Structure probing data (DMS and 2A3) for a 177-nucleotide construct. For DMS, 1,430 sequencing reads were counted. For 2A3, 1,037 sequencing reads were counted. The RNA was probed in 150 mM KOAc, 10 mM MgCl2 and 150 mM bicine (pH 8.5) at 24 C.
[RMDB]
RNA sequence: GGGAACGACUCGAGUAGAGUCGAAAAGCGGGCGAAAGCCUGUUCACAGCCGGUUUCCGGGCCCGUCAUCCGGGUGGGUUGCGAGAGGCGGCAUGCAAAUGCCGUCCCAGAUGAAUGGCUGCCACGUGUAAGGCGAGUUAUUCGUAACUCGCCUUACAAAAGAAACAACAACAACAAC
Reactivity to DMS in 0.01 (KOAc 150mM, MgCl2 10mM, bicine 150mM(pH8.5), 24C), signal-to-noise 1, nucleotides 027 to 126: g000c000g040g000g000c000g010a040a080a230g010c040c080u010g000u000u050c150a250c140a080g070c000c000g000g000u020u050u000c000c000g000g010g000c040c040c020g040u030c120a000u080c160c160g000g020g000u010g000g000g050u020u010g000c100g010a080g000a180g020g000c000g000g010c020a000u000g010c300a100a060a020u010g000c000c000g000u000c000c000c000a020g000a120u010g000a040a120u020g020g000c000u000g020c090c000a070c110g000u040
Reactivity to 2A3 in 0.01 (KOAc 150mM, MgCl2 10mM, bicine 150mM(pH8.5), 24C), signal-to-noise 1, nucleotides 027 to 126: g000c030g000g000g000c000g040a110a010a040g030c000c000u010g030u060u100c050a030c000a050g030c010c010g050g030u040u050u000c010c010g000g060g020c000c000c000g010u020c040a070u060c030c010g080g010g000u040g040g000g000u130u040g120c100g010a150g000a010g040g020c000g000g000c000a000u020g040c000a030a040a040u030g020c000c000g030u050c000c000c000a040g000a080u060g060a070a020u060g020g000c040u010g020c010c010a120c020g040u050